Conditions: 150 mM KOAc, 10 mM MgCl2 and 150 mM bicine (pH 8.5), 24 C. Chemical mapping of a 177-nucleotide RNA with DMS and 2A3. 2A3 adducts were read by reverse transcription with SuperScript II with manganese.

[RMDB]
RNA sequence: GGGAACGACUCGAGUAGAGUCGAAAAGUCGAUGCGCAGUUUGUCCGUCGCCAGCGCGCCUGGUUGCGAACACGUGCGAGCCGCCAGCCUCGUGAAACGCCAGCUACUUUGCCGUGCAAGCGGUGACAGGCUUCUAAGUGUUCGCACUUAGAAGCCUAAAAGAAACAACAACAACAAC
Reactivity to DMS in 0.01 (KOAc 150mM, MgCl2 10mM, bicine 150mM(pH8.5), 24C), signal-to-noise 2, nucleotides 027 to 126: g000u000c060g010a070u010g010c110g040c040a060g010u010u010u000g000u000c050c030g000u000c060g030c020c010a040g010c040g070c140g000c070c020u000g000g000u000u000g040c000g010a010a040c040a080c100g010u000g000c070g000a130g010c070c020g000c040c080a070g000c030c020u000c090g010u010g030a030a070a120c190g020c010c030a090g000c020u020a060c050u020u010u000g020c040c030g020u000g010c160a060a140g000c030g000g010u000g000a100c280
Reactivity to 2A3 in 0.01 (KOAc 150mM, MgCl2 10mM, bicine 150mM(pH8.5), 24C), signal-to-noise 1, nucleotides 027 to 126: g030u050c070g020a020u070g020c080g030c070a060g070u110u080u090g050u140c000c010g040u030c030g030c030c000a030g000c030g020c010g040c060c000u000g030g060u030u050g020c000g020a020a010c020a000c070g060u080g030c030g010a030g010c030c040g040c040c010a000g030c000c000u040c040g020u040g070a130a040a030c010g000c000c000a040g000c000u020a020c040u050u120u130g040c020c000g020u020g080c040a100a040g020c010g000g010u000g020a010c050